[RMDB]
RNA sequence: GGGAACGACUCGAGUAGAGUCGAAAAGGAAAUAGGUAUGCGGUCGCUAUUAAAAUAUUGCGACAAACUGGCACACAGCAAGCGAGUGGUGACCAGUGCACACAAGUCGUUCCCAGCCAGAAAAAAACAUGUAAGUACAGUUCGCUGUACUUACAUGAAAAGAAACAACAACAACAAC
Reactivity to 2A3 in 0.01 (KOAc 150mM, MgCl2 10mM, bicine 150mM(pH8.5), 24C), signal-to-noise 4, nucleotides 027 to 126: g090g030a050a110a060u140a110g080g030u110a040u080g060c040g020g010u000c010g000c030u030a030u050u170a090a070a060a090u250a040u090u100g000c010g000a010c010a020a040a010c010u010g000g000c010a000c010a000c000a030g100c060a190a060g140c060g160a060g090u110g070g040u020g030a120c000c000a000g010u010g020c010a010c000a010c010a030a030g010u010c000g000u000u020c010c000c000a010g020c020c020a020g150a020a080a000a000a000a000a010
Reactivity to DMS in 0.01 (KOAc 150mM, MgCl2 10mM, bicine 150mM(pH8.5), 24C), signal-to-noise 4, nucleotides 027 to 126: g000g020a070a110a130u020a070g000g030u000a030u000g020c040g010g030u000c000g020c000u010a060u000u010a050a080a120a110u000a050u000u000g000c020g000a020c000a080a210a020c020u000g000g000c020a050c010a020c020a110g000c080a110a110g010c190g010a060g030u000g000g010u000g000a190c000c020a000g000u000g020c070a000c050a030c050a100a030g000u000c000g000u000u010c000c000c000a110g000c140c150a100g020a000a010a050a040a090a060a130